[RMDB]
RNA sequence: GGGAACGACUCGAGUAGAGUCGAAAACGGUUACGCCUUCUUUACCGUUAUCAAGGAAGGUACUCGGCCAUGCUAAGGGAAGCAUUAUUCCUUAGGCGCAUGUCUCCGCCAGCAUGGUGUGAGGGGAAAAAGUAUGCUGGGUUCGCCCAGCAUACAAGUGGAAGGAUUUCUUCGGAAAUCCUUCCACAAAAGAAACAACAACAACAAC
Reactivity to 2A3 in 0.01 (KOAc 150mM, MgCl2 10mM, bicine 150mM(pH8.5), 24C), signal-to-noise 2, nucleotides 027 to 156: c000g000g000u000u060a020c020g000c000c020u000u020c010u000u110u030a020c010c010g240u080u040a040u100c110a010a000g060g000a000a000g000g000u060a070c000u000c000g020g000c000c000a000u000g000c010u100a130a130g040g020g020a000a020g000c110a130u130u110a130u080u240c000c000u000u130a070g010g000c000g000c020a050u180g140u120c090u050c070c000g020c010c000a020g010c010a000u000g110g020u070g120u210g040a080g010g030g020g180a000a090a000a000a050g000u000a010u010g010c000u000g010g000g020u030u010c070g100c030c000c000a000g000c000a000u000a000c000a000a020

Overview: The record gives the reactivity of an RNA of 207 nucleotides to 2A3. Values cover nucleotides 27 to 156. The RNA was probed in 150 mM KOAc, 10 mM MgCl2 and 150 mM bicine (pH 8.5) at 24 C. For 2A3, 771 sequencing reads were counted.